[RMDB]
RNA sequence: GGGAACGACUCGAGUAGAGUCGAAAAUGGUAAACUGACCAAGCUCAACCAGUCGUAAAAGUUCGCUAUCUCCUUGCUAACGUUCUCAACAUUCAGCUCGUCGAGAGAAAGGUGCUUGAAUGCGAUCCCAGGUACGUCAAUUCGUUGACGUACCUGGAAAAGAAACAACAACAACAAC
Reactivity to DMS in 0.01 (KOAc 150mM, MgCl2 10mM, bicine 150mM(pH8.5), 24C), signal-to-noise 1, nucleotides 027 to 126: u000g000g000u000a110a130a100c090u000g020a060c060c060a100a110g020c070u000c030a110a020c040c000a040g000u000c100g100u000a060a040a110a170g050u000u020c040g010c110u000a150u010c020u000c030c020u000u000g000c030u000a010a250c020g000u000u010c010u010c070a080a120c060a010u040u000c130a030g020c040u010c030g000u010c120g000a130g010a160g020a090a040a020g000g040u000g020c000u000u000g010a010a050u000g020c040g000a120u010c080
Reactivity to 2A3 in 0.01 (KOAc 150mM, MgCl2 10mM, bicine 150mM(pH8.5), 24C), signal-to-noise 1, nucleotides 027 to 126: u090g000g000u070a080a030a220c090u060g020a000c020c050a060a000g050c000u030c010a000a020c010c010a010g070u040c020g000u000a070a000a120a020g000u000u020c030g000c030u020a090u100c050u000c000c010u020u030g040c010u050a050a080c030g020u040u020c000u000c040a000a110c020a040u010u080c000a000g000c020u030c030g080u030c060g080a050g000a000g070a100a010a000g110g000u020g000c000u070u030g040a040a040u060g030c030g030a030u050c030